Chemical mapping of a 177-nucleotide RNA with 2A3 and DMS.
Source: RMDB library OK2TST, as collected in RNAgym.
For 2A3, 1,777 sequencing reads were counted.
For DMS the reverse transcriptase was MarathonRT.
Values cover nucleotides 27 to 126.
[RMDB]
RNA sequence: GGGAACGACUCGAGUAGAGUCGAAAAAAGGGCUCAUCGUUUUCAUAGCUUGUCAACUCUCAAUGAAUAGCCAGGUCGCUUGCCGGGAUUAAAAUGUUGCUGUGCUGUCCCCACCCCCUGGCAAGUCGAACCUACUUACAUUCGUGUAAGUAGGUUCAAAAGAAACAACAACAACAAC
Reactivity to 2A3 in 0.01 (KOAc 150mM, MgCl2 10mM, bicine 150mM(pH8.5), 24C), signal-to-noise 2, nucleotides 027 to 126: a030a010g080g020g000c040u040c070a060u050c030g010u000u040u080u060c090a090u110a080g030c010u010u070g060u070c030a070a050c000u020c000u030c080a020a130u110g060a120a070u060a100g050c040c010a020g030g050u110c070g030c030u000u020g000c000c010g020g000g040a040u110u220a020a080a080a120u170g040u090u080g080c060u030g060u040g040c020u040g030u060c000c040c020c010a060c000c010c000c000c000u010g030g000c010a010a010g020u020c030
Reactivity to DMS in 0.01 (KOAc 150mM, MgCl2 10mM, bicine 150mM(pH8.5), 24C), signal-to-noise 4, nucleotides 027 to 126: a070a050g000g010g010c020u000c040a100u000c060g010u010u010u000u000c020a090u000a090g020c030u010u000g010u000c050a050a090c110u000c040u000c070a070a080u000g000a080a070u010a090g000c050c050a050g000g010u000c130g000c020u000u000g000c020c010g000g000g000a150u010u010a050a070a070a090u000g010u010u000g010c020u000g010u010g000c060u000g000u000c000c000c000c050a180c070c050c040c010c010u000g010g000c030a020a020g000u000c180